Record summary: The data come from the RNA Mapping Database (RMDB), libraries RFM100 and RFMREP. Structure probing data (2A3 and DMS) for a 177-nucleotide construct.
RNA sequence: GGGAACGACUCGAGUAGAGUCGAAAAUGUGUGGGACAAUAGAAUAACAAGGCUGUCAAUUUGAGCUUGACGGCUGCAAACCGAAUGGAGUGAAAUCCCUUCUGGAGUGCAGUCUGAUUUGUUAUGCAGCUAUCCAGUUUUUCGAAACUGGAUAGCUAAAAGAAACAACAACAACAAC
Reactivity to 2A3 in 0.01 (KOAc 150mM, MgCl2 10mM, bicine 150mM(pH8.5), 24C), signal-to-noise 4, nucleotides 027 to 126: u120g050u010g020u070g040g030g050a010c030a040a070u090a100g120a070a040u060a080a020c040a020a010g060g000c020u030g010u100c010a020a030u060u100u270g080a050g040c040u030u030g010a020c040g000g000c000u010g010c010a040a020a010c000c000g000a010a010u060g000g010a020g000u040g030a040a050a070u010c010c000c020u010u000c080u190g020g000a040g030u000g000c000a000g010u000c020u060g060a080u040u000u030g010u000u010a040u090g050c050
Reactivity to DMS in 0.01 (KOAc 150mM, MgCl2 10mM, bicine 150mM(pH8.5), 24C), signal-to-noise 4, nucleotides 027 to 126: u020g020u010g010u000g000g000g000a080c100a070a060u040a110g010a130a040u020a030a060c060a040a050g010g000c050u000g020u000c050a030a080u010u020u020g010a100g000c140u000u010g000a120c200g000g010c000u000g000c000a010a000a020c000c010g010a010a010u000g000g000a020g010u000g020a140a120a150u010c000c010c060u000u000c000u050g040g000a040g020u010g010c010a010g010u000c000u000g000a070u020u010u010g010u000u000a030u000g020c200
2A3 adducts were read by reverse transcription with SuperScript II with manganese. As a SHAPE reagent, 2A3 marks flexible, mostly unpaired nucleotides at the ribose 2'-OH. The 2A3 profile rests on 2,885 reads.